Background: Conditions: 150 mM KOAc, 10 mM MgCl2 and 150 mM bicine (pH 8.5), 24 C. Structure probing data (DMS and 2A3) for a 177-nucleotide construct. The 2A3 profile rests on 1,625 reads. For DMS the reverse transcriptase was MarathonRT.
RNA sequence: GGGAACGACUCGAGUAGAGUCGAAAAAUGCAGACCCUUAUUGUCGCGAAAAACCAGCAGUGAAUGAGGUAUCCAGCGAAUUAUCUCAAAUGAGUCUGCAUUCGCUGUAAGGUGAACGGCAUUUAAAGCAUAUAGGCUGGUUCGCCAGCCUAUAUGCAAAAGAAACAACAACAACAAC
Reactivity to DMS in 0.01 (KOAc 150mM, MgCl2 10mM, bicine 150mM(pH8.5), 24C), signal-to-noise 2, nucleotides 027 to 126: a030u000g000c050a080g020a150c050c000c040u010u020a040u010u000g040u000c090g000c050g040a060a050a090a230a050c100c090a150g000c030a090g010u000g010a090a110u010g000a070g000g000u000a080u010c080c080a150g000c170g010a030a080u000u000a040u000c040u000c000a040a080a080u000g020a090g020u000c000u000g000c020a110u000u000c010g050c000u010g010u010a110a060g010g000u000g010a060a040c020g010g000c020a010u000u000u000a090a100a160
Reactivity to 2A3 in 0.01 (KOAc 150mM, MgCl2 10mM, bicine 150mM(pH8.5), 24C), signal-to-noise 2, nucleotides 027 to 126: a010u070g000c040a020g020a130c000c010c000u000u020a180u080u110g040u040c040g010c000g110a120a040a000a070a020c030c030a020g060c000a000g040u010g060a080a060u030g000a000g090g000u030a100u100c060c020a010g100c050g060a050a020u150u060a090u070c090u000c010a070a130a070u100g030a020g090u010c000u060g010c000a000u010u020c000g000c000u030g020u080a090a110g060g010u030g010a130a010c040g000g000c000a040u020u150u130a090a060a010